Source information: This 177-nucleotide RNA was probed chemically with 2A3. For 2A3, 1,788 sequencing reads were counted. Source: RMDB library OK1LIB, as collected in RNAgym. 2A3 adducts were read by reverse transcription with SuperScript II with manganese. Conditions: 150 mM KOAc, 10 mM MgCl2 and 150 mM bicine (pH 8.5), 24 C.
RNA sequence: GGGAACGACUCGAGUAGAGUCGAAAACGGAAAACAGUGAGUGGACGGAAGAAAUCCCCUUCCCACCUCCCCACUGUCCACUCACUGUCUUCCUAAUAGGAAAUAUAAAUCGGGGGUGGGAAGGGGACCUCCGUGAUCCAUUCGUGGAUCACGGAGGAAAAGAAACAACAACAACAAC
Reactivity to 2A3 in 0.01 (KOAc 150mM, MgCl2 10mM, bicine 150mM(pH8.5), 24C), signal-to-noise 2, nucleotides 027 to 126: c030g000g000a000a000a000a000c000a010g000u000g000a000g000u000g010g000a000c000g020g040a030a000g100a080a100a120u050c010c000c020c010u000u000c000c000c000a010c000c000u040c060c060c040c000a070c030u000g000u030c000c000a000c000u010c010a000c000u000g000u020c000u000u000c000c000u030a150a050u110a160g050g120a040a080a000u280a040u060a030a160a020u220c120g020g000g000g000g010u000g000g000g000a000a010g000g000g010g000a000